[RMDB]
Chemical mapping of a 207-nucleotide RNA with 2A3 and DMS. The RNA was probed in 150 mM KOAc, 10 mM MgCl2 and 150 mM bicine (pH 8.5) at 24 C. Values cover nucleotides 27 to 156. For 2A3 the reverse transcriptase was SuperScript II with manganese. The DMS profile rests on 8,775 reads. The 2A3 profile rests on 4,973 reads.

RNA sequence: GGGAACGACUCGAGUAGAGUCGAAAAGCUUAAUAACCUGCGCUGAGCCCUUCUCCCCCAGCUUGCCUGUGUCCUAGGGAAUUGGAAGGUCAUCCUUCACAGGAUCGUGAGGAAGUCCUGCUCGGGGUCCAAACAUGGUAAUUCGUUACCAUGUUAACAUCCUCACAAUAUUCGUAUUGUGAGGAUGAAAAGAAACAACAACAACAAC
Reactivity to 2A3 in 0.01 (KOAc 150mM, MgCl2 10mM, bicine 150mM(pH8.5), 24C), signal-to-noise 5, nucleotides 027 to 156: g000c010u090u080a070a020u090a150a160c000c020u070g050c040g020c060u090g050a080g010c050c000c000u080u070c080u080c020c010c000c000c000a000g010c030u040u070g030c010c010u060g010u020g020u070c000c040u030a030g060g010g040a060a060u120u080g040g030a030a020g030g010u050c010a110u120c020c000u110u080c040a040c000a040g080g040a080u080c070g050u040g060a020g010g010a040a040g020u030c010c020u020g010c000u010c020g010g000g000g010u010c020c060a040a040a000c010a000u000g000g000u010a020a020u050u020c010g010u000u000a000c000c000a000u000g000u000u000a000a000
Reactivity to DMS in 0.01 (KOAc 150mM, MgCl2 10mM, bicine 150mM(pH8.5), 24C), signal-to-noise 3, nucleotides 027 to 156: g010c040u000u000a080a110u000a090a100c040c010u000g010c040g030c050u000g020a090g020c020c030c080u000u000c050u000c030c020c000c010c030a110g000c070u000u000g030c050c030u010g040u000g010u000c040c040u000a100g010g030g010a050a110u000u010g010g010a070a100g020g020u000c060a110u000c030c010u020u010c050a050c050a070g000g010a060u010c080g010u020g010a090g000g010a100a090g000u000c020c000u000g010c030u000c030g030g010g020g000u000c030c060a140a020a030c010a010u000g000g020u000a010a080u000u000c270g000u000u000a020c000c000a010u000g000u000u000a030a180